[RMDB]
RNA sequence: GGGAACGACUCGAGUAGAGUCGAAAAAUACAAAAUUACGGACGGACGGACACGCCCAGCUCUAUUUGUUAAAAGAUCCUGAUCUUCUGAUCAUGUCUCAGUGUCAGUUCAUGUCAAGAACAUUUUUUUUGAAGAUGAAGUGUUCAAGUGAUCAUGAAUUACGCGAUUUAUUCGUAAAUCGCGUAAUAAAAGAAACAACAACAACAAC
Reactivity to DMS in 0.01 (KOAc 150mM, MgCl2 10mM, bicine 150mM(pH8.5), 24C), signal-to-noise 2, nucleotides 027 to 156: a130u000a230c060a040a050a080a110u010u010a100c090g040g040a010c000g000g010a130c060g010g000a100c150a100c040g040c010c020c030a150g000c030u000c060u000a080u010u000u000g010u000u010a050a070a080a090g030a120u010c070c040u000g000a080u000c040u000u000c090u010g080a030u000c040a040u000g010u000c060u000c030a150g050u010g010u010c050a110g000u000u000c010a020u010g000u000c010a090a160g000a060a020c020a000u000u000u000u000u000u000u000u000g040a120a210g030a070u000g000a010a050g030u010g010u000u010c010a070a130g000u010g040a070u010c020a080u010g000a140
Reactivity to 2A3 in 0.01 (KOAc 150mM, MgCl2 10mM, bicine 150mM(pH8.5), 24C), signal-to-noise 3, nucleotides 027 to 156: a000u110a050c050a020a130a050a100u250u150a130c100g030g060a000c000g000g030a000c010g010g010a010c020a030c090g000c010c030c010a050g000c020u020c030u060a110u130u070u110g060u100u180a020a090a050a010g020a020u040c000c060u030g020a030u030c070u190u060c060u250g000a020u040c040a040u110g090u000c020u010c120a020g010u010g040u040c020a000g000u040u020c010a010u060g010u000c030a050a020g000a010a000c010a010u000u040u010u030u060u050u160u210g170a130a040g060a080u160g020a020a020g010u020g030u010u040c030a060a100g120u050g060a030u080c030a040u070g070a030

Source: RMDB library OK3TST, as collected in RNAgym. An RNA of 207 nucleotides, treated with DMS and 2A3 and read out base by base. 2A3 is a SHAPE reagent: it acylates the 2'-hydroxyl of flexible nucleotides of all four kinds. Conditions: 150 mM KOAc, 10 mM MgCl2 and 150 mM bicine (pH 8.5), 24 C. 2A3 adducts were read by reverse transcription with SuperScript II with manganese.